RNA sequence: GGGAACGACUCGAGUAGAGUCGAAAACUGUCAUACGACUUGUUACUGCUUCAAUCAAAGUUGAACCUUGACCAGAAAUAGCUCGAUCUCUUGCUUCUUUCAUCGCUUUAUACAUUGCUAAUGGAUCGUAUAUCCCCGACUUCGGUCGGGGAUAUACAAAAGAAACAACAACAACAAC
Reactivity to DMS in 0.01 (KOAc 150mM, MgCl2 10mM, bicine 150mM(pH8.5), 24C), signal-to-noise 1, nucleotides 027 to 126: c030u000g020u010c090a100u000a100c090g000a120c060u010u010g000u000u020a200c120u000g010c090u000u000c050a050a140u020c080a070a090a090g040u000u010g000a150a060c110c000u000u000g020a110c060c050a090g000a040a090a030u000a080g020c050u010c020g010a090u000c020u040c030u000u000g030c040u000u000c010u010u010u010c050a060u020c150g000c040u000u010u000a110u000a100c090a070u020u000g030c050u000a060a090u010g000g000a150u000c110
Reactivity to 2A3 in 0.01 (KOAc 150mM, MgCl2 10mM, bicine 150mM(pH8.5), 24C), signal-to-noise 1, nucleotides 027 to 126: c000u010g000u120c030a090u130a260c080g050a070c060u060u050g110u050u120a040c040u040g050c000u100u020c070a090a150u080c010a100a040a140g070u000u070g050a030a030c010c010u000u040g070a010c010c000a010g150a040a220a060u170a040g070c040u040c030g100a100u000c000u000c000u070u010g010c010u000u000c000u040u130u020c010a090u010c040g000c010u040u140u010a060u040a070c070a080u050u120g000c010u000a120a000u080g090g030a080u030c040